[RMDB]
This 177-nucleotide RNA was probed chemically with 2A3.

RNA sequence: GGGAACGACUCGAGUAGAGUCGAAAACGCCGACCAGCAUCUCGGCGGUGGAAUUGCUUGGAGCCUAACGGAAUUGCCGGUCAUCAUGGUCAUCGUGGCGCUGGUUACCCAAUGGGCGCGCCAAGACCUUCCUGGCGCGCUUCGGCGCGCCAGGAAGAAAAGAAACAACAACAACAAC
Reactivity to 2A3 in 0.01 (KOAc 150mM, MgCl2 10mM, bicine 150mM(pH8.5), 24C), signal-to-noise 1, nucleotides 027 to 126: c000g000c000c000g000a020c000c100a020g030c000a300u030c030u030c140g000g000c070g000g010u000g030g210a160a300u000u060g100c000u030u000g000g060a030g000c090c090u100a010a010c000g000g190a240a180u230u140g050c000c000g060g060u080c170a040u000c010a100u110g000g120u160c070a000u180c020g030u020g000g000c010g000c010u030g000g000u030u030a100c000c000c000a000a060u000g060g000g000c000g000c010g110c000c000a000a000g000a000c000

Values cover nucleotides 27 to 126.
The data come from the RNA Mapping Database (RMDB), library OK1LIB.
The RNA was probed in 150 mM KOAc, 10 mM MgCl2 and 150 mM bicine (pH 8.5) at 24 C.